[RMDB]
RNA sequence: GGGAACGACUCGAGUAGAGUCGAAAAGAUAUGGAACGCUUUGAUCGUGGACCGAGGAGGUCGGAAACGACCUCUCCCCACCGGUACACGGGAGCGUUCCUAAGUCAAACUUGCCUUCGGGCAAGAAGAGUAGGUAUCACUUCGGUGAUACCUACUCAAAAGAAACAACAACAACAAC
Reactivity to DMS in 0.01 (KOAc 150mM, MgCl2 10mM, bicine 150mM(pH8.5), 24C), signal-to-noise 2, nucleotides 027 to 126: g020a030u000a300u020g000g020a010a000c000g000c030u000u000u000g000a090u010c070g000u000g000g000a010c010c010g000a160g000g010a010g010g000u000c010g000g000a110a060a200c000g050a000c000c000u010c020u000c020c030c000c060a300c130c010g000g000u000a020c020a020c030g010g010g000a000g000c000g060u000u000c000c000u010a000a030g000u020c030a180a080a260c010u000u010g010c000c000u000u020c230g030g020g000c000a000a000g000a100a140
Reactivity to 2A3 in 0.01 (KOAc 150mM, MgCl2 10mM, bicine 150mM(pH8.5), 24C), signal-to-noise 2, nucleotides 027 to 126: g020a000u110a060u160g000g000a000a030c000g010c030u260u160u120g140a170u300c010g000u010g010g010a010c000c000g010a030g050g010a010g000g070u000c010g000g030a040a080a020c000g000a000c000c000u020c020u020c030c010c000c010a050c030c000g000g010u000a010c000a000c020g030g030g000a020g000c020g010u020u000c000c000u000a020a010g020u000c040a000a080a130c010u000u000g000c010c000u000u100c300g130g000g010c010a000a000g020a050a010
This 177-nucleotide RNA was probed chemically with DMS and 2A3. The reactions ran in a buffer of 150 mM KOAc, 10 mM MgCl2 and 150 mM bicine (pH 8.5), at 24 C. Reactivities are rounded to 0.1 and cut off at 0 and 3.